[RMDB]
RNA sequence: GGGAACGACUCGAGUAGAGUCGAAAACAGUCAAUGUGAAGGCGGGCCAGACCAUCGCCGCAUUCUACCAGAGCACCGUCAUGAUCUUUGGCACGAUGGCUCGCUACAUUCGCAGAGUUAGGGAAAAGACCACGACUGAUUUCGAUCAGUCGUGGUCAAAAGAAACAACAACAACAAC
Reactivity to DMS in 0.01 (KOAc 150mM, MgCl2 10mM, bicine 150mM(pH8.5), 24C), signal-to-noise 2, nucleotides 027 to 126: c050a070g000u000c140a050a140u000g060u000g000a010a110g000g020c000g010g040g000c010c010a070g000a130c150c060a080u000c090g040c030c000g000c090a070u000u000c050u000a100c030c050a070g000a040g000c070a060c040c040g030u000c110a090u000g010a060u000c020u010u000u000g000g000c070a040c140g000a110u000g000g020c010u000c000g000c010u020a050c040a140u000u000c040g070c010a010g000a150g000u000u000a070g000g000g020a040a080a030a150
Reactivity to 2A3 in 0.01 (KOAc 150mM, MgCl2 10mM, bicine 150mM(pH8.5), 24C), signal-to-noise 1, nucleotides 027 to 126: c000a020g080u040c050a000a170u020g020u020g060a070a080g030g010c000g000g020g000c020c010a030g040a140c000c020a060u100c040g050c020c050g000c010a030u140u030c020u090a080c000c040a040g010a000g100c050a030c020c060g140u100c020a060u060g030a080u070c050u020u040u080g030g020c050a020c070g050a080u030g010g000c000u000c000g010c010u040a020c010a090u050u000c000g000c000a000g000a000g030u050u070a050g010g030g030a050a010a000a140